[RMDB]
RNA sequence: GGGAACGACUCGAGUAGAGUCGAAAAACACUGAGUAAGGUAGUUGCUUAAACUUAUGCAGAUGCAGAGCUCCUAUUGAACCAUACUUUACCGCACUACGUACUUGGGUCAUUAAGGUCUUGAUUGGCGAUUACCUUUUGUUCGCAAAAGGUAAUCGAAAAGAAACAACAACAACAAC
Reactivity to DMS in 0.01 (KOAc 150mM, MgCl2 10mM, bicine 150mM(pH8.5), 24C), signal-to-noise 4, nucleotides 027 to 126: a100c060a120c050u000g000a110g020u010a020a030g010g000u010a050g010u000u010g030c070u010u000a070a060a090c080u010u010a050u000g010c040a080g000a120u010g020c060a070g000a090g000c060u010c010c020u000a060u000u000g010a070a080c060c050a060u000a060c110u000u000u000a100c120c090g000c040a050c060u000a070c060g010u000a000c090u000u010g010g000g000u000c040a060u000u010a070a080g010g000u000c030u010u000g000a150u010u000g010g020
Reactivity to 2A3 in 0.01 (KOAc 150mM, MgCl2 10mM, bicine 150mM(pH8.5), 24C), signal-to-noise 3, nucleotides 027 to 126: a000c120a000c030u060g030a050g050u020a000a030g100g040u050a020g060u080u170g050c030u090u150a100a130a080c020u090u040a030u140g010c020a010g010a240u090g010c020a010g030a040g070c020u010c020c000u040a070u050u110g010a050a000c030c010a050u040a110c040u070u070u060a100c040c000g020c010a030c030u060a020c050g060u000a020c020u020u040g000g000g050u020c000a020u090u170a080a020g070g020u010c030u090u120g110a200u080u110g080g030